[RMDB]
RNA sequence: GGGAACGACUCGAGUAGAGUCGAAAAGCACGUCCGGAAAGACCCGUGCGAACACUUGAGCUCCGGCUUGACCGCUCUUGUGGAUUAGGACGUUCUAGCUCCGGCUUGGCCGCUAGUUCGUCCGAAAAGUAUGAGCUCGUUUCGACGAGCUCAUACUAAAAGAAACAACAACAACAAC
Reactivity to 2A3 in 0.01 (KOAc 150mM, MgCl2 10mM, bicine 150mM(pH8.5), 24C), signal-to-noise 3, nucleotides 027 to 126: g050c010a000c010g060u050c030c000g040g090a090a110a050g100a130c000c000c010g000u010g000c000g040a040a040c030a020c020u010u040g000a010g010c050u080c090c020g130g000c060u250u250g130a210c030c030g020c000u010c000u020u020g020u010g010g030a040u050u210a020g000g000a000c000g000u000u000c000u000a010g030c070u050c100c010g100g080c150u090u270g150g010c030c010g000c000u000a000g000u000u000c000g010u000c000c000g000a000a000a000
Reactivity to DMS in 0.01 (KOAc 150mM, MgCl2 10mM, bicine 150mM(pH8.5), 24C), signal-to-noise 2, nucleotides 027 to 126: g030c060a000c020g080u030c000c080g000g000a020a290a080g030a190c100c030c020g000u030g000c010g000a080a050c010a010c050u000u020g000a080g000c030u020c170c000g050g000c280u110u010g010a110c070c130g020c030u010c050u000u010g000u000g020g000a190u000u020a000g000g020a030c000g040u000u000c000u000a000g000c060u020c060c000g000g000c140u060u050g000g040c160c110g000c010u000a000g010u060u000c000g000u000c000c020g000a050a070a120